The data come from the RNA Mapping Database (RMDB), library RFMREP. The record gives the reactivity of an RNA of 177 nucleotides to DMS.

[RMDB]
RNA sequence: GGGAACGACUCGAGUAGAGUCGAAAAGGUGAGGUUCGCCUCACCAAGCGGGAUGUUGUUAUGCACUGGAUUUAUAGAGAGGUUUGGUGGUGAGCCAAACCUUUUACACCCAUUCUUUCGAGAAUGGAGAUGAGCUAGAUUUCGAUCUAGCUCAUCUAAAAGAAACAACAACAACAAC
Reactivity to DMS in 0.01 (KOAc 150mM, MgCl2 10mM, bicine 150mM(pH8.5), 24C), signal-to-noise 1, nucleotides 027 to 126: g000g040u000g020a010g000g000u000u020c270g010c010c010u000c010a000c000c020a040a120g030c100g020g000g000a090u000g000u030u000g000u000u000a070u010g020c130a140c040u000g000g000a270u000u010u010a100u000a150g020a050g010a010g000g030u000u000u000g000g000u000g000g080u010g000a300g010c000c000a000a030a000c010c010u010u000u010u000a100c190a190c300c000c000a000u000u000c000u000u000u000c170g000a050g010a010a000u000g000g000